This 207-nucleotide RNA was probed chemically with DMS and 2A3. For 2A3, 2,296 sequencing reads were counted. Source: RMDB library M2RFPK, as collected in RNAgym. Reactivities are given for positions 27 through 156. High DMS reactivity at an A or C suggests that its Watson-Crick edge is free.
[RMDB]
RNA sequence: GGGAACGACUCGAGUAGAGUCGAAAAAUGUGCGGCAAAGAAACAUUGUUUAUGCAAAGGCACUUCGCAAUGUGUGCUCAAACAUUGCUUAUUCAAACUCGCUUCACAAUGUGCGACAAAGAAACAUAAAACGUUUAGUACUUCGGUACUAAACGAACAACACGGAAGACUUCGGUCUUCCGUGUUGAAAAGAAACAACAACAACAAC
Reactivity to DMS in 0.01 (KOAc 150mM, MgCl2 10mM, bicine 150mM(pH8.5), 24C), signal-to-noise 1, nucleotides 027 to 156: a030u020g060u010g020c060g000g000c010a110a030a140g020a090a060a060c010a010u000u000g000u000u000u000a190u000g010c040a040a160a130g000g000c020a050c010u000u010c190g010c050a060a030u010g020u000g000u000g000c050u010c060a030a100a100c040a050u000u000g020c020u000u030a070u010u000c040a030a180a170c060u000c060g000c020u010u030c100a010c060a050a040u000g000u000g000c050g000a110c050a030a030a110g000a220a100a040c050a110u000a050a060a090a190c010g000u010u000u020a000g030u000a010c000u000u000c300g110g040u000a020c000u000a020a000a010c000g000a040a040
Reactivity to 2A3 in 0.01 (KOAc 150mM, MgCl2 10mM, bicine 150mM(pH8.5), 24C), signal-to-noise 4, nucleotides 027 to 156: a010u100g020u070g030c050g050g000c050a160a010a040g070a060a090a010c010a030u030u050g050u030u170u120a110u110g020c090a130a070a120g110g010c000a010c000u060u020c020g010c030a010a020u030g000u010g010u030g070c100u080c220a040a050a010c010a020u000u000g000c000u050u110a140u060u070c020a000a040a070c050u010c010g010c000u040u050c040a020c040a060a080u040g020u020g070c000g010a000c050a010a140a010g100a040a050a010c070a030u130a070a090a050a040c000g010u000u000u000a000g000u000a000c000u000u040c220g040g000u000a000c000u000a000a000a000c000g000a010a000